[RMDB]
Structure probing data (DMS and 2A3) for a 207-nucleotide construct. Values cover nucleotides 27 to 156. The RNA was probed in 150 mM KOAc, 10 mM MgCl2 and 150 mM bicine (pH 8.5) at 24 C. The DMS profile rests on 1,667 reads. It was measured as part of the RMDB library M2RFPK.
RNA sequence: GGGAACGACUCGAGUAGAGUCGAAAAAUAUCAUUCAGACCCUUUAUGGAACUGUCAUUCAACCCCAACAAUCUAGUGCAAAUAUUGUCUUAAUUACUUAGGCUAAAAGAAAUAAGUAUUAAAGCGGAAUCCAGGUGGAGGUUCGCCUCCACCUGAACGUAGACUAAAGGUUCGCCUUUAGUCUACGAAAAGAAACAACAACAACAAC
Reactivity to DMS in 0.01 (KOAc 150mM, MgCl2 10mM, bicine 150mM(pH8.5), 24C), signal-to-noise 1, nucleotides 027 to 156: a140u000a060u010c030a070u000u010c000a080g010a300c010c020c000u000u010u020a070u010g040g000a060a060c020u010g030u020c210a140u000u000c060a100a110c010c020c010c020a070a050c090a050a120u000c070u000a080g040u000g020c010a070a090a120u000a120u000u010g020u010c010u000u000a020a100u000u000a030c040u000u000a010g020g020c050u000a040a090a150a070g010a100a110a050u000a000a040g000u000a010u020u010a020a060a090g030c000g050g000a140a110u020c030c010a010g010g050u020g020g000a030g020g000u010u000c280g040c000c020u000c010c020a000c020c000u000g000a010a020
Reactivity to 2A3 in 0.01 (KOAc 150mM, MgCl2 10mM, bicine 150mM(pH8.5), 24C), signal-to-noise 2, nucleotides 027 to 156: a000u080a040u090c040a060u060u140c050a040g030a220c020c020c050u040u090u140a140u190g020g000a080a070c030u050g030u040c010a050u120u080c010a070a100c000c020c000c000a020a020c010a030a050u060c070u190a030g040u040g100c040a100a040a080u110a100u040u110g030u030c000u030u100a110a080u050u050a020c010u020u010a010g060g010c010u120a170a120a050a080g050a030a170a070u030a050a000g000u000a020u100u100a210a060a000g020c050g040g080a050a030u080c140c000a000g000g000u000g000g000a000g000g050u060u040c160g030c030c000u010c000c000a000c000c000u000g000a000a000